[RMDB]
RNA sequence: GGGAACGACUCGAGUAGAGUCGAAAAAGCUCGUUCGUUUAACGAAUAGUGUAGGGGAGAGUAAGAAGCCAUCCCAUCAGUUAGUAAGUAGGGUAAGGGCCUACUUAGACGAAGACGGGUACGGGGAAUAUUGCCUCGUGUUCGCACGAGGCAAUAUAAAAGAAACAACAACAACAAC
Reactivity to 2A3 in 0.01 (KOAc 150mM, MgCl2 10mM, bicine 150mM(pH8.5), 24C), signal-to-noise 2, nucleotides 027 to 126: a000g050c030u050c060g010u070u010c010g000u000u020u210a150a020c040g020a020a050u070a130g090u060g030u050a060g000g010g010g000a040g010a000g060u060a110a050g050a070a000g040c030c020a030u020c020c010c000a020u040c010a040g070u030u140a030g070u050a050a000g000u010a010g010g020g010u020a020a080g080g040g020c000c000u010a010c000u000u040a000g000a020c060g010a060a010g070a060c020g000g000g000u030a030c010g010g010g030g010a050
Reactivity to DMS in 0.01 (KOAc 150mM, MgCl2 10mM, bicine 150mM(pH8.5), 24C), signal-to-noise 4, nucleotides 027 to 126: a130g000c000u000c030g060u010u000c030g010u010u020u020a110a060c020g000a040a040u000a100g020u000g000u010a090g000g000g020g000a060g000a100g000u050a040a050g020a080a100g020c040c060a130u020c000c000c000a050u020c100a100g010u020u010a140g020u020a010a000g000u000a010g000g000g010u030a110a080g010g010g000c000c010u010a000c000u000u000a020g000a060c030g020a070a110g010a070c120g000g000g000u010a090c120g010g020g010g010a130
The record gives the reactivity of an RNA of 177 nucleotides to 2A3 and DMS. For DMS, 6,451 sequencing reads were counted. Source: RMDB library RFM100, as collected in RNAgym. For 2A3, 1,674 sequencing reads were counted. Reactivities are given for positions 27 through 126.